[RMDB]
An RNA of 177 nucleotides, treated with 2A3 and DMS and read out base by base. The reactions ran in a buffer of 150 mM KOAc, 10 mM MgCl2 and 150 mM bicine (pH 8.5), at 24 C.

RNA sequence: GGGAACGACUCGAGUAGAGUCGAAAACUCAUGGGCAAGGGCGCGCUGCCCGACGAUCAUCCGCUGAUCCUCGGCAUGACCGGAUUCUGGGGCACGCGCUUCAUCAACGACCAGUGCCGCAGCGCCGGUCGAGCAUCUGAUUCGUCAGAUGCUCGACAAAAGAAACAACAACAACAAC
Reactivity to 2A3 in 0.01 (KOAc 150mM, MgCl2 10mM, bicine 150mM(pH8.5), 24C), signal-to-noise 1, nucleotides 027 to 126: c020u020c010a070u150g020g020g000c060a050a030g050g030g050c030g000c000g020c050u020g040c000c000c000g010a000c030g030a000u040c000a010u010c100c070g000c130u070g080a180u100c010c060u110c030g000g040c150a070u060g020a010c000c110g050g010a080u180u020c030u200g050g000g000g090c010a000c030g040c020g010c030u020u040c020a030u010c000a000a070c040g040a030c000c020a000g030u030g100c010c010g100c050a030g010c000g030c020c070g060
Reactivity to DMS in 0.01 (KOAc 150mM, MgCl2 10mM, bicine 150mM(pH8.5), 24C), signal-to-noise 2, nucleotides 027 to 126: c020u000c050a110u000g020g010g010c070a100a090g000g010g000c020g020c010g000c240u010g020c020c000c000g010a060c040g010a030u010c040a030u000c060c110g020c160u000g000a040u020c120c070u020c070g010g000c120a060u010g020a000c020c000g000g020a140u000u010c140u000g050g010g000g030c000a010c010g020c030g000c030u000u010c040a090u010c110a070a120c070g010a060c080c050a020g010u000g000c010c050g020c080a030g000c120g000c010c030g010
DMS adducts were read by reverse transcription with MarathonRT.